[RMDB]
RNA sequence: GGGAACGACUCGAGUAGAGUCGAAAAUAUUGCUGAGAACUUAGGUAGGCUUGGCGAAACGGUCGCUUUUUUAUCUGCUAGUGGACAAGAUAGUGAAUGGGAAAUGAUUAAACGAUUGUCCACACCACAUCGUUGACGAUUUCGAUCGUCAACGAUGAAAAGAAACAACAACAACAAC
Reactivity to DMS in 0.01 (KOAc 150mM, MgCl2 10mM, bicine 150mM(pH8.5), 24C), signal-to-noise 1, nucleotides 027 to 126: u020a050u000u000g000c000u000g000a040g010a100a120c020u000u040a080g010g020u000a070g020g000c000u000u000g010g010c000g030a040a080a120c050g070g000u000c070g060c040u030u000u040u000u080u010a000u050c120u010g030c130u030a080g000u000g010g010a020c000a010a000g010a140u000a160g000u000g010a080a010u000g000g020g020a150a110a020u110g000a100u000u000a070a070a030c000g000a220u000u000g040u000c010c000a000c000a150c070c160a110
Reactivity to 2A3 in 0.01 (KOAc 150mM, MgCl2 10mM, bicine 150mM(pH8.5), 24C), signal-to-noise 2, nucleotides 027 to 126: u300a060u110u200g000c100u050g000a010g000a140a000c020u060u050a150g010g150u000a020g080g010c000u070u140g020g010c090g030a190a030a000c060g070g030u120c080g050c200u030u140u070u010u040u040a150u080c140u050g070c030u040a020g020u020g000g000a020c040a070a010g060a090u160a070g090u140g020a060a090u070g020g040g060a040a180a120u160g090a180u080u120a080a110a080c000g000a000u040u000g030u000c000c000a000c000a000c020c010a020